[RMDB]
Description
This 177-nucleotide RNA was probed chemically with DMS and 2A3. Values cover nucleotides 27 to 126. For 2A3 the reverse transcriptase was SuperScript II with manganese. The reactions ran in a buffer of 150 mM KOAc, 10 mM MgCl2 and 150 mM bicine (pH 8.5), at 24 C.

RNA sequence: GGGAACGACUCGAGUAGAGUCGAAAACACUCACGAUUCGUCGUGAGUGAAAGAACGCCAAAGUGACGCAAUCUUCCGCGUCACGAAGGCGAAACGAGGUAAAAACCGGGUCCUUCGGGACCCGGAACACGUACUAAGACUUCGGUCUUAGUACGUGAAAAGAAACAACAACAACAAC
Reactivity to DMS in 0.01 (KOAc 150mM, MgCl2 10mM, bicine 150mM(pH8.5), 24C), signal-to-noise 3, nucleotides 027 to 126: c020a020c000u010c010a040c000g020a030u000u010c240g050u010c000g010u010g010a020g030u000g010a030a060a090g000a110a190c010g000c000c010a030a170a280g000u000g000a020c000g020c010a100a120u010c190u010u000c180c120g010c010g000u010c010a000c000g000a080a130g000g010c000g000a010a050a080c110g000a080g000g010u000a050a110a050a110a080c000c010g030g000g000u000c000c000u000u010c180g000g020g010a000c000c000c000g000g000a010a030
Reactivity to 2A3 in 0.01 (KOAc 150mM, MgCl2 10mM, bicine 150mM(pH8.5), 24C), signal-to-noise 2, nucleotides 027 to 126: c010a000c000u010c000a000c000g020a010u050u050c200g040u000c000g000u110g000a000g000u010g000a000a000a000g000a120a010c000g000c000c010a040a100a040g000u000g000a000c000g000c010a050a150u070c170u250u070c200c070g000c020g010u000c000a000c000g000a000a000g010g020c000g000a010a000a000c030g050a050g060g100u120a090a110a030a020a020c000c010g000g000g000u010c000c000u030u050c150g070g000g010a000c000c000c000g000g000a010a000